[RMDB]
RNA sequence: GGGAACGACUCGAGUAGAGUCGAAAAGAUAUGGACUAGUCCGAUAAGCUGGGUUCGGAAACGAACCUCAGCUUUUGACGGACUGUCCUAAGUCAAAGAAUCAGUGAAGUUCGCUUCACUGAUUCAAUCAGUAUAUAUAGUUCGCUAUAUAUACUGAAAAAGAAACAACAACAACAAC
Reactivity to 2A3 in 0.01 (KOAc 150mM, MgCl2 10mM, bicine 150mM(pH8.5), 24C), signal-to-noise 2, nucleotides 027 to 126: g020a010u050a030u090g000g000a010c090u170a070g000u000c000c010g060a130u080a260a020g000c010u010g010g000g010u000u010c010g010g010a060a030a020c000g000a000a020c010c010u050c010a000g000c010u000u010u030u040g000a000c000g000g000a000c000u000g000u000c000c000u000a070a010g020u010c020a030a000a280g000a000a010u010c000a000g000u000g010a000a000g010u050u150c210g110c140u000u000c000a000c000u000g000a000u000u000c000a000a020
Reactivity to DMS in 0.01 (KOAc 150mM, MgCl2 10mM, bicine 150mM(pH8.5), 24C), signal-to-noise 8, nucleotides 027 to 126: g010a030u000a290u000g000g000a020c000u010a020g010u000c000c000g010a110u010a020a020g020c000u000g010g000g000u000u000c000g010g000a070a050a150c000g000a000a010c000c010u010c020a000g010c000u000u000u000u000g010a240c070g000g000a010c000u000g000u000c000c000u010a020a090g000u000c020a110a120a140g000a020a000u000c000a010g010u000g000a020a010g010u000u010c270g010c000u000u000c000a010c000u000g000a000u000u000c000a070a100
Structure probing data (2A3 and DMS) for a 177-nucleotide construct. The DMS profile rests on 20,392 reads. High 2A3 reactivity points to a flexible backbone, as in loops and unpaired stretches. The reactions ran in a buffer of 150 mM KOAc, 10 mM MgCl2 and 150 mM bicine (pH 8.5), at 24 C.